The record gives the reactivity of an RNA of 177 nucleotides to 2A3 and DMS. For 2A3 the reverse transcriptase was SuperScript II with manganese. The DMS profile rests on 1,337 reads. The data come from the RNA Mapping Database (RMDB), library OK2TRN. Conditions: 150 mM KOAc, 10 mM MgCl2 and 150 mM bicine (pH 8.5), 24 C. For 2A3, 1,429 sequencing reads were counted.

[RMDB]
RNA sequence: GGGAACGACUCGAGUAGAGUCGAAAACAAUGAAACACCUAAUUCUGCCAUUGAAUAUCCUUUUCUGUAUCUCACAACCGCAUAGGAAUACCAACCUUGCUUUAGCAGAUUGAUUGGUAAUUAUUCAUCCCUCAUCAUUGUUCGCAAUGAUGAGGGAAAAAGAAACAACAACAACAAC
Reactivity to 2A3 in 0.01 (KOAc 150mM, MgCl2 10mM, bicine 150mM(pH8.5), 24C), signal-to-noise 2, nucleotides 027 to 126: c010a000a100u110g060a050a100a040c040a040c010c030u030a060a070u060u050c020u070g090c000c020a100u050u060g030a070a020u020a060u140c020c000u000u040u100u040c050u080g060u040a100u000c030u000c000a020c000a050a160c070c040g030c050a000u160a050g040g030a030a020u070a100c010c070a050a030c010c010u010u060g000c000u080u220u150a040g000c000a020g020a070u020u030g100a090u010u050g020g000u030a040a040u070u150a110u050u020c040a080
Reactivity to DMS in 0.01 (KOAc 150mM, MgCl2 10mM, bicine 150mM(pH8.5), 24C), signal-to-noise 2, nucleotides 027 to 126: c080a100a040u000g000a110a080a070c070a040c060c010u000a080a060u020u000c010u020g020c060c060a070u010u000g020a060a060u010a070u000c040c010u000u000u000u000c060u010g010u000a080u000c010u000c050a060c110a060a080c090c070g030c160a040u010a080g000g010a110a100u010a030c060c020a020a040c040c010u000u000g000c010u010u010u010a100g060c060a060g000a080u000u000g010a090u000u010g000g010u000a040a090u010u020a110u010u000c080a150